RNA sequence: GGGAACGACUCGAGUAGAGUCGAAAAGGGGUCUCGUCGUCCUCCUUGGAUUUAGCUCUGAGGUAUACUGAAGCCUCCACGGUAUACUACCCACCAGAGCUUGUCAGGAGGACAGACGAGACGGAGGCACCCAAAGUGCGCAGUUCGCUGCGCACAAGGUAUAGUUAUGCUUCGGCAUAACUAUACCAAAAGAAACAACAACAACAAC
Reactivity to DMS in 0.01 (KOAc 150mM, MgCl2 10mM, bicine 150mM(pH8.5), 24C), signal-to-noise 1, nucleotides 027 to 156: g010g000g010g000u010c000u000c070g010u000c010g000u000c010c010u010c010c020u040u000g030g030a040u000u020u000a050g030c000u000c020u010g000a240g090g000u000a030u000a010c040u010g010a030a180g000c050c010u010c000c010a300c090g000g000u000a030u000a020c000u000a030c050c000c000a300c050c020a070g000a010g010c010u010u020g000u000c070a060g000g000a020g040g010a020c010a000g010a000c060g000a010g000a030c020g020g010a040g060g030c000a110c000c000c000a070a130a120g020u000g050c000g000c000a020g020u030u000c290g030c030u000g060c000g020c000a040c000a010a040
Reactivity to 2A3 in 0.01 (KOAc 150mM, MgCl2 10mM, bicine 150mM(pH8.5), 24C), signal-to-noise 2, nucleotides 027 to 156: g010g010g000g000u000c010u000c000g010u000c010g000u010c010c000u000c020c020u170u290g090g000a040u280u290u140a020g000c010u000c000u000g010a000g000g010u000a000u000a000c000u010g050a050a010g000c000c000u010c000c000a000c000g000g000u000a000u000a000c000u020a060c070c110c000a060c010c000a000g000a000g000c000u000u010g010u010c030a090g000g020a000g000g000a000c000a000g000a000c000g000a000g000a000c000g010g000a000g000g000c010a050c010c010c020a040a160a040g020u020g000c010g000c000a010g010u050u120c140g080c130u000g000c000g020c000a000c000a000a020